[RMDB]
RNA sequence: GGGAACGACUCGAGUAGAGUCGAAAAAGAAAGGAGGAGGAGAAAUAUAGCGCGAGAUCGGUCCUCCCACGCGCCUCGCGCGCUGAUAAGCGCGCGCGGAGGAUGAUUAAUAGAUAGCGCGCAAAAAGCAUGAAUUAAUGUUCGCAUUAAUUCAUGCAAAAGAAACAACAACAACAAC
Reactivity to 2A3 in 0.01 (KOAc 150mM, MgCl2 10mM, bicine 150mM(pH8.5), 24C), signal-to-noise 2, nucleotides 027 to 126: a000g060a010a050a020g060g040a020g000g020a000g020g040a030g090a090a170a010u210a050u110a120g010c040g000c010g000a010g000a030u030c020g010g060u010c000c000u020c000c000c000a030c020g210c010g000c020c010u000c000g030c010g120c040g020c020u020g040a130u040a130a030g050c010g120c020g000c020g010c030g050g000a030g040g000a010u050g000a020u060u300a140a100u010a080g020a010u020a000g040c000g000c010g000c020a000a040a040a000a000
Reactivity to DMS in 0.01 (KOAc 150mM, MgCl2 10mM, bicine 150mM(pH8.5), 24C), signal-to-noise 2, nucleotides 027 to 126: a080g010a090a080a120g010g010a090g010g010a070g000g000a050g030a120a050a060u010a100u000a150g000c020g000c000g010a060g030a030u000c010g000g000u000c000c010u000c000c010c020a080c050g000c070g020c020c030u000c030g020c070g060c050g010c040u000g010a080u000a120a080g000c060g000c010g040c010g060c100g000g010a030g000g010a020u010g010a120u000u010a080a060u010a080g000a030u000a050g010c000g000c000g010c010a050a040a020a090a090
Conditions: 150 mM KOAc, 10 mM MgCl2 and 150 mM bicine (pH 8.5), 24 C. This 177-nucleotide RNA was probed chemically with 2A3 and DMS. Reactivities are given for positions 27 through 126. The data come from the RNA Mapping Database (RMDB), library M2PK90.